This 177-nucleotide RNA was probed chemically with DMS and 2A3. Source: RMDB library OK1LIB, as collected in RNAgym. The DMS profile rests on 4,332 reads.

RNA sequence: GGGAACGACUCGAGUAGAGUCGAAAAAAUGACUGUCGUGCGCUGUAGGGAGCGGCGAAUUAUCGAUCCCCCGCGGCCCUCCAGGAACCCCGCAGGCGUUGCGAGUACCCCGCGUCUUCGCGGGGUGCCCCUAUGCGUAGUUCGCUACGCAUAGGGGAAAAGAAACAACAACAACAAC
Reactivity to DMS in 0.01 (KOAc 150mM, MgCl2 10mM, bicine 150mM(pH8.5), 24C), signal-to-noise 2, nucleotides 027 to 126: a070a050u010g030a050c040u010g010u000c000g010u020g050c050g000c050u000g000u000a050g000g050g000a300g000c030g010g010c130g010a130a030u000u010a130u030c070g010a090u000c040c020c070c030c010g010c000g000g000c020c030c000u010c020c080a030g000g020a090a190c060c000c020c010g000c020a010g010g000c050g040u010u010g000c060g000a080g010u000a030c000c010c000c000g010c010g010u040c160u000u010c080g030c010g000g000g000g010u000g000
Reactivity to 2A3 in 0.01 (KOAc 150mM, MgCl2 10mM, bicine 150mM(pH8.5), 24C), signal-to-noise 4, nucleotides 027 to 126: a000a010u300g040a060c050u100g020u050c040g030u020g090c050g000c020u030g000u040a090g050g000g020a010g010c030g020g000c060g080a030a090u220u100a140u220c070g050a090u050c010c010c000c010c010g010c000g050g180c010c010c000u020c020c000a020g060g050a070a080c000c000c010c000g000c000a000g000g020c010g010u040u070g020c030g020a030g050u060a040c000c000c000c000g000c000g030u110c130u300u190c040g020c000g000g010g000g000u000g000